[RMDB]
RNA sequence: GGGAACGACUCGAGUAGAGUCGAAAACGCUAAACACCAGUCGCAGACGCUAAAACUCACGCUACGUCAAGACGGAUGUGACAACGCGAAAGCUAGCGCAAGCUAUAGCGUUACGUACGAGAAGCGAAAAUAUAUUAUUAUUCGUAAUAAUAUAUUUAAAAGAAACAACAACAACAAC
Reactivity to DMS in 0.01 (KOAc 150mM, MgCl2 10mM, bicine 150mM(pH8.5), 24C), signal-to-noise 5, nucleotides 027 to 126: c040g010c010u010a080a140a110c070a120c040c040a150g020u010c030g000c090a090g030a040c020g000c030u000a020a060a120a220c040u010c070a170c020g000c040u010a050c120g000u010c040a070a110g010a130c080g010g000a130u030g020u010g010a050c090a100a070c080g000c010g000a090a090a100g000c020u000a020g000c030g000c110a110a060g010c000u010a050u010a090g000c000g010u000u010a090c040g000u030a020c040g010a110g000a070a050g010c020g000a090
Reactivity to 2A3 in 0.01 (KOAc 150mM, MgCl2 10mM, bicine 150mM(pH8.5), 24C), signal-to-noise 6, nucleotides 027 to 126: c020g000c030u060a060a120a010c050a050c020c020a020g020u040c010g000c070a050g030a090c020g010c040u060a050a050a040a060c040u070c040a040c040g030c050u100a020c030g040u010c030a040a020g080a090c050g040g030a080u100g060u050g050a030c060a050a010c020g010c000g050a130a010a000g010c020u030a010g010c030g020c120a030a000g000c010u050a020u060a060g000c000g000u010u020a010c020g020u040a020c020g020a010g020a080a010g010c020g040a060

Chemical mapping of a 177-nucleotide RNA with DMS and 2A3. As a SHAPE reagent, 2A3 marks flexible, mostly unpaired nucleotides at the ribose 2'-OH. The reactions ran in a buffer of 150 mM KOAc, 10 mM MgCl2 and 150 mM bicine (pH 8.5), at 24 C. For DMS, 10,191 sequencing reads were counted. DMS adducts were read by reverse transcription with MarathonRT. High DMS reactivity at an A or C suggests that its Watson-Crick edge is free.